[RMDB]
RNA sequence: GGGAACGACUCGAGUAGAGUCGAAAAAAAGAUAUGGAAGAUAGAACUACCCUGUGACAAAUCAACAGCACGCAUCGGAAACGAUGCGUGACAUGAUUUGCCACAGGGCUAUCUUCCUAAGUCAAAACAUCUAUACCUUGUUCGCAAGGUAUAGAUGAAAAGAAACAACAACAACAAC
Reactivity to 2A3 in 0.01 (KOAc 150mM, MgCl2 10mM, bicine 150mM(pH8.5), 24C), signal-to-noise 2, nucleotides 027 to 126: a020a010a020g050a030u070a040u110g000g000a000a000g000a010u010a020g020a050a010c040u090a070c120c010c000u000g000u000g010a000c010a000a020a000u010c040a040a160c030a140g060c000a000c010g000c000a000u010c010g040g010a100a070a020c000g010a010u010g010c000g000u000g030a000c000a010u010g000a000u010u010u000g010c000c000a000c000a000g020g010g010c010u000a000u000c000u000u000c010c000u000a040a000g010u000c030a030a000a040a140
Reactivity to DMS in 0.01 (KOAc 150mM, MgCl2 10mM, bicine 150mM(pH8.5), 24C), signal-to-noise 5, nucleotides 027 to 126: a090a070a070g000a040u010a300u010g010g010a010a010g000a010u000a000g000a070a040c060u020a300c030c010c000u000g020u000g010a020c000a000a010a000u000c000a030a050c300a180g000c000a010c000g010c000a000u010c010g010g000a160a070a180c010g010a010u000g000c000g000u000g010a010c030a120u010g000a010u000u000u000g000c020c000a010c000a000g000g000g020c010u000a000u000c000u000u000c010c000u000a010a070g010u000c040a080a080a110a150
The record gives the reactivity of an RNA of 177 nucleotides to 2A3 and DMS. 2A3 adducts were read by reverse transcription with SuperScript II with manganese. Source: RMDB library TTRDES, as collected in RNAgym. The 2A3 profile rests on 12,573 reads. The RNA was probed in 150 mM KOAc, 10 mM MgCl2 and 150 mM bicine (pH 8.5) at 24 C. Values are in units of 0.01, from 0 to 300, in steps of 10.